[RMDB]
RNA sequence: GGGAACGACUCGAGUAGAGUCGAAAAGUUUACGCUCCAAGAUCGGUGGAUUGCAGCCCUAUCAAUAUCUAGGAGAACUGUGCUAUGUUUAGAAGAUUAGGUAGUCUCUAAACAGAACAAUUUACCUCAUACGUUAGGACGUUCGCGUCCUAACGAAGCAUCUGAAAAAGUUCGCUUUUUCAGAUGCAAAAGAAACAACAACAACAAC
Reactivity to DMS in 0.01 (KOAc 150mM, MgCl2 10mM, bicine 150mM(pH8.5), 24C), signal-to-noise 2, nucleotides 027 to 156: g020u010u000u000a120c100g010c070u010c040c060a070a120g020a030u000c090g020g030u010g000g020a170u020u000g000c100a090g000c060c030c040u010a170u000c040a100a080u000a110u010c080u000a060g010g020a300g020a020a040c100u020g000u000g030c040u000a190u000g010u000u000u000a010g010a060a120g000a030u000u000a120g040g030u000a120g010u000c010u000c010u000a000a010a000c010a020g000a050a050c050a010a040u010u000u010a150c060c020u010c080a110u010a130c030g000u010u000a010g000g020a000c000g020u010u020c300g000c040g020u000c010c000u000a010a000c000g010a030a130
Reactivity to 2A3 in 0.01 (KOAc 150mM, MgCl2 10mM, bicine 150mM(pH8.5), 24C), signal-to-noise 7, nucleotides 027 to 156: g010u030u050u100a070c070g010c010u000c020c000a060a030g010a080u080c080g030g030u040g030g070a120u080u150g040c020a030g020c010c000c000u070a060u070c040a100a060u050a040u200c050u070a070g000g030a030g020a060a060c060u080g030u030g080c040u060a020u090g010u010u000u010a070g010a300a000g000a040u060u020a020g030g050u050a000g010u010c000u000c000u000a000a000a010c010a010g030a050a020c070a030a020u040u050u050a030c000c020u090c060a120u080a180c010g010u000u000a000g000g000a000c010g010u030u030c200g020c000g070u000c000c000u000a000a000c000g000a000a010